The data come from the RNA Mapping Database (RMDB), library M2RFPK. This 207-nucleotide RNA was probed chemically with 2A3.
[RMDB]
RNA sequence: GGGAACGACUCGAGUAGAGUCGAAAAGGGGCUGACAGGAAUCGACAGUAGAGUGUAUCAUGUCAGUAAGCAUGCCGGGGAAUGGUGGUUUACCCCGUUAUAAAAUGAUUACCGACCAAUAAUUGGCUUAGCUCGUUGGGCUUCGGCCCAACGAGAAGACUAGCGGUAUGUUCGCAUACCGCUAGUCAAAAGAAACAACAACAACAAC
Reactivity to 2A3 in 0.01 (KOAc 150mM, MgCl2 10mM, bicine 150mM(pH8.5), 24C), signal-to-noise 2, nucleotides 027 to 156: g000g020g000g030c040u050g000a010c040a030g080g010a040a130u110c070g050a030c070a020g080u150a050g030a060g060u160g000u020a130u150c040a070u060g040u040c010a000g050u030a110a000g010c020a020u100g050c050c000g000g000g000g030a020a000u040g020g010u020g000g000u020u010u040a040c000c000c000c010g000u020u050a160u050a020a050a000a010u110g020a030u030u060a020c010c030g050a070c020c080a050a030u200a050a150u090u090g020g020c040u050u140a060g070c000u050c000g000u000u000g010g000g000c050u000u020c130g060g000c000c000c000a000a000c000g000a000g000a000a000